An RNA of 177 nucleotides, treated with 2A3 and DMS and read out base by base. 2A3 adducts were read by reverse transcription with SuperScript II with manganese. Source: RMDB libraries RFM100 and RFMREP, as collected in RNAgym. For DMS the reverse transcriptase was MarathonRT.

RNA sequence: GGGAACGACUCGAGUAGAGUCGAAAAGGCCGCUCCUUAUAUUGCGACUUGCUUAAACUUGUGACUGAAUAAUCAACGAUUUAACAAGUUCAAGUGGUUAAUAGCCACCCGCAUAACUAGGAAUAUAGGCUCUGAAAUAAUUCGUUAUUUCAGAGCCAAAAGAAACAACAACAACAAC
Reactivity to 2A3 in 0.01 (KOAc 150mM, MgCl2 10mM, bicine 150mM(pH8.5), 24C), signal-to-noise 8, nucleotides 027 to 126: g100g020c020c010g030c040u040c000c000u060u070a090u030a040u120u080g020c010g010a010c000u020u020g070c010u010u020a010a010a030c020u040u040g030u040g100a040c050u090g130a120a160u170a160a050u090c020a020a070c050g030a040u000u000u020a010a000c010a010a000g010u030u090c050a080a020g000u030g020g010u140u040a060a010u130a160g010c000c000a000c000c020c000g000c010a030u040a080a070c050u030a050g000g060a050a020u190a030u060a140
Reactivity to DMS in 0.01 (KOAc 150mM, MgCl2 10mM, bicine 150mM(pH8.5), 24C), signal-to-noise 3, nucleotides 027 to 126: g000g020c010c010g000c170u000c010c020u000u000a070u010a080u010u010g000c050g000a060c000u000u010g020c240u000u020a010a020a020c050u000u030g010u010g000a040c230u000g000a140a080u010a140a120u010c060a070a060c100g000a100u000u010u010a010a010c010a000a000g000u020u000c190a140a120g020u020g000g010u030u000a120a080u000a090g000c000c000a020c010c090c000g000c030a020u000a070a090c150u000a030g000g010a020a090u010a080u020a140